[RMDB]
The record gives the reactivity of an RNA of 177 nucleotides to 2A3 and DMS.

RNA sequence: GGGAACGACUCGAGUAGAGUCGAAAACAGCACGUGUAAACGCACGCAAAAGCCCUUUAUGGCAAUGUGUCUCGGCUGGUUAUGGUACACCAAUCUGACGUAUGGUUAUCAGUAAUAUUCCCGCACGAAACCUUUGUUCUUUCGAGAACAAAGGUUUAAAAGAAACAACAACAACAAC
Reactivity to 2A3 in 0.01 (KOAc 150mM, MgCl2 10mM, bicine 150mM(pH8.5), 24C), signal-to-noise 7, nucleotides 027 to 126: c010a000g030c040a030c130g010u020g010u020a040a040a000c040g040c090a030c000g000c000a010a020a030a050g020c010c000c000u070u180u070a250u170g010g010c010a050a060u020g000u000g010u030c000u000c010g020g000c000u000g010g020u030u070a030u030g000g000u020a010c020a010c140c010a050a100u070c080u140g170a060c100g120u180a090u080g010g010u020u010a000u020c010a020g040u040a020a070u020a060u070u010c000c000c000g000c030a060c090g110
Reactivity to DMS in 0.01 (KOAc 150mM, MgCl2 10mM, bicine 150mM(pH8.5), 24C), signal-to-noise 7, nucleotides 027 to 126: c030a030g010c020a090c020g020u000g000u000a030a050a050c080g000c120a050c010g000c060a050a040a180a170g000c030c000c190u030u020u020a090u050g000g000c010a050a270u010g010u000g000u000c020u000c020g000g010c000u000g000g010u000u010a050u000g000g000u000a010c180a020c000c010a020a300u030c060u020g010a100c200g000u010a120u000g010g010u000u000a030u000c000a050g000u000a020a060u010a170u000u000c000c000c000g030c290a090c260g000